[RMDB]
RNA sequence: GGGAACGACUCGAGUAGAGUCGAAAACACCUGGCAUGAUCUGGGACAGCGACAUCUUGGGGACAGAGAUGGGCCAGGAAGGAGGGGGCAGAGAGCUAGAGAUGGAGACCCACCACGGGGUGGGAGGCCUGUGAAGACAAUUCGUUGUCUUCACAGGAAAAGAAACAACAACAACAAC
Reactivity to DMS in 0.01 (KOAc 150mM, MgCl2 10mM, bicine 150mM(pH8.5), 24C), signal-to-noise 3, nucleotides 027 to 126: c110a120c050c020u010g030g000c050a110u010g000a110u010c050u000g020g000g010a100c130a080g030c070g000a080c070a050u010c070u000u000g010g010g000g010a130c080a070g000a080g020a100u010g020g010g020c020c030a050g010g020a090a080g010g000a100g020g010g000g040g020c080a060g010a050g000a050g010c070u010a060g000a110g010a090u010g000g000a150g030a100c000c010c010a040c030c030a140c300g000g000g010g010u000g000g000g010a060g000g000
Reactivity to 2A3 in 0.01 (KOAc 150mM, MgCl2 10mM, bicine 150mM(pH8.5), 24C), signal-to-noise 2, nucleotides 027 to 126: c050a000c000c000u040g030g000c020a110u110g010a070u080c040u070g000g000g100a070c020a060g090c040g080a060c040a050u010c050u040u140g030g000g030g030a030c060a030g060a020g020a100u070g010g000g020c010c020a010g040g020a010a040g010g020a100g000g040g030g000g000c030a020g020a000g010a000g070c040u020a000g000a000g000a090u060g000g030a030g030a030c010c010c000a020c000c010a080c140g290g000g000g030u010g000g030g010a010g000g010
This 177-nucleotide RNA was probed chemically with DMS and 2A3. The RNA was probed in 150 mM KOAc, 10 mM MgCl2 and 150 mM bicine (pH 8.5) at 24 C. Reactivities are rounded to 0.1 and cut off at 0 and 3. The data come from the RNA Mapping Database (RMDB), library OK2TRN.